An RNA of 177 nucleotides, treated with 2A3 and DMS and read out base by base. The data come from the RNA Mapping Database (RMDB), library M2PK50. Reactivities are given for positions 27 through 126.
[RMDB]
RNA sequence: GGGAACGACUCGAGUAGAGUCGAAAAGAAGAUGUGUUCGCACAUCUUCAAAAGCAUCGACUAGGACCGGCGAGACAAAGGACCGAUAGCUAAUCGCGACGAAAACAGGCCUCUUCGGAGGCCUGAACGUAUUAUCUUAGUUCGCUAAGAUAAUACGAAAAGAAACAACAACAACAAC
Reactivity to 2A3 in 0.01 (KOAc 150mM, MgCl2 10mM, bicine 150mM(pH8.5), 24C), signal-to-noise 6, nucleotides 027 to 126: g000a000a000g010a000u000g020u010g020u040u130c180g050c070a000c000a010u000c000u000u000c000a010a000a010a010g040c010a060u070c040g050a040c050u060a050g000g080a040c020c010g040g020c030g040a070g030a060c070a060a150a040g060g020a050c020c010g060a080u070a040g030c060u070a080a030u080c050g000c030g070a080c030g040a060a040a030a060c000a000g000g000c010c000u000c010u050u060c150g090g000a000g000g050c000c000u000g000a000a000
Reactivity to DMS in 0.01 (KOAc 150mM, MgCl2 10mM, bicine 150mM(pH8.5), 24C), signal-to-noise 8, nucleotides 027 to 126: g010a010a010g010a000u000g020u000g010u000u010c210g030c000a010c000a000u000c000u000u000c000a030a070a080a130g010c110a070u000c040g010a060c050u000a060g010g000a050c070c030g010g010c040g010a110g010a080c120a050a100a090g000g000a110c100c020g010a060u010a070g010c070u000a060a080u000c080g020c060g000a080c120g000a070a050a060a160c010a000g000g000c010c000u000c000u000u010c170g030g010a010g010g010c000c000u000g000a010a060

In probing experiments dimethyl sulfate is read out at A N1 and C N3, which are open when not base-paired. For 2A3 the reverse transcriptase was SuperScript II with manganese. Reactivities are rounded to 0.1 and cut off at 0 and 3. As a SHAPE reagent, 2A3 marks flexible, mostly unpaired nucleotides at the ribose 2'-OH.